[RMDB]
RNA sequence: GGGAACGACUCGAGUAGAGUCGAAAAACCCAAGCCGUCUGUGCCUCUGUCAAAUGCUCCAACAACGUAUCUUGUCUAAAAUUUCAUUCACAACAGGGAUCACUUAGAGCUUGGGGCAUCUACAGACCAUGAUCGAAGUAUUCGUACUUCGAUCAUGAAAAGAAACAACAACAACAAC
Reactivity to DMS in 0.01 (KOAc 150mM, MgCl2 10mM, bicine 150mM(pH8.5), 24C), signal-to-noise 6, nucleotides 027 to 126: a060c010c000c000a130a120g010c090c080g010u010c040u010g020u010g010c090c090u010c030u000g000u000c160a050a060a030u000g000c020u000c010c010a030a040c070a120a110c180g010u010a050u000c020u000u000g000u000c040u010a050a070a050a080u000u010u000c150a070u000u010c090a080c300a070a020c040a040g000g000g000a030u000c070a040c080u000u010a130g010a100g000c170u000u000g000g000g000g000c010a010u000c060u010a040c040a020g000a070c190
Reactivity to 2A3 in 0.01 (KOAc 150mM, MgCl2 10mM, bicine 150mM(pH8.5), 24C), signal-to-noise 6, nucleotides 027 to 126: a000c010c000c000a010a010g040c030c020g060u040c070u060g060u060g020c010c020u090c030u070g100u070c050a040a080a070u050g000c000u000c020c010a030a040c010a010a020c060g040u040a050u070c050u040u070g070u040c070u130a070a110a140a160u120u240u140c090a120u130u090c090a050c020a140a060c010a070g030g000g060a030u070c030a030c030u050u110a060g010a020g120c000u020u010g000g000g000g000c000a000u000c010u040a030c020a010g020a050c030
The data come from the RNA Mapping Database (RMDB), library OK2TST. This 177-nucleotide RNA was probed chemically with DMS and 2A3. For 2A3, 8,812 sequencing reads were counted.